The record gives the reactivity of an RNA of 177 nucleotides to 2A3 and DMS. The DMS profile rests on 3,761 reads.
[RMDB]
RNA sequence: GGGAACGACUCGAGUAGAGUCGAAAAGAUAUGGAUGGUCAUAGAGCCAACAGCUAGCUCGGAAACGAGCUAGACAUGGCUAUAUGCCAUCCUAAGUCAAAGUGCGAACACUUCGGUGUUCGCACAACAUUCGUGAAUGGUUCGCCAUUCACGAAUGAAAAGAAACAACAACAACAAC
Reactivity to 2A3 in 0.01 (KOAc 150mM, MgCl2 10mM, bicine 150mM(pH8.5), 24C), signal-to-noise 3, nucleotides 027 to 126: g030a020u100a030u210g010g000a010u010g000g040u300c050a010u020a020g020a000g020c000c010a050a030c060a130g080c000u000a000g010c000u000c000g000g000a010a080a080c020g000a000g000c000u000a000g000a020c000a050u070g000g000c000u020a010u010a000u040g030c000c000a020u000c000c000u000a060a000g030u020c060a100a150a100g000u000g010c000g010a000a000c030a020c030u080u200c300g120g000u010g000u000u000c000g020c000a000c000a000a000
Reactivity to DMS in 0.01 (KOAc 150mM, MgCl2 10mM, bicine 150mM(pH8.5), 24C), signal-to-noise 4, nucleotides 027 to 126: g000a040u000a300u000g010g030a020u000g000g030u020c010a020u000a000g010a020g020c000c000a050a120c300a200g000c010u000a000g000c000u000c010g030g010a130a110a240c000g010a010g010c000u010a000g000a030c080a150u010g010g010c000u000a030u000a010u000g010c020c000a000u000c000c000u000a010a060g010u000c040a080a100a160g000u000g000c000g000a010a040c000a020c000u010u010c270g050g020u000g000u000u000c020g040c000a010c000a020a120
The 2A3 profile rests on 8,557 reads.